[RMDB]
RNA sequence: GGGAACGACUCGAGUAGAGUCGAAAACUAGCCUGGUCAGCUAGAUUUACACGAUGUCAUACUCAUCGUGAGAUGACCUUAAGCGCGUAUUGUUGGAAGGGUUAGUGAACGCGCACACCCCAAUAGAGGAUCAUGCUAGGUUCGCCUAGCAUGAUCCAAAAGAAACAACAACAACAAC
Reactivity to DMS in 0.01 (KOAc 150mM, MgCl2 10mM, bicine 150mM(pH8.5), 24C), signal-to-noise 2, nucleotides 027 to 126: c010u000a020g020c000c000u000g010g020u020c000a300g000c010u000a000g000a160u000u000u000a240c000a020c000g000a000u000g000u010c300a150u020a180c300u010c000a010u000c030g020u000g000a120g010a160u000g000a010c000c020u000u000a100a050g000c000g010c010g000u000a220u000u010g020u010u010g060g020a110a140g010g000g000u000u010a150g020u000g010a100a030c020g010c000g020c010a120c280a120c000c000c020c010a100a140u030a130g000a240

Structure probing data (DMS) for a 177-nucleotide construct. Conditions: 150 mM KOAc, 10 mM MgCl2 and 150 mM bicine (pH 8.5), 24 C.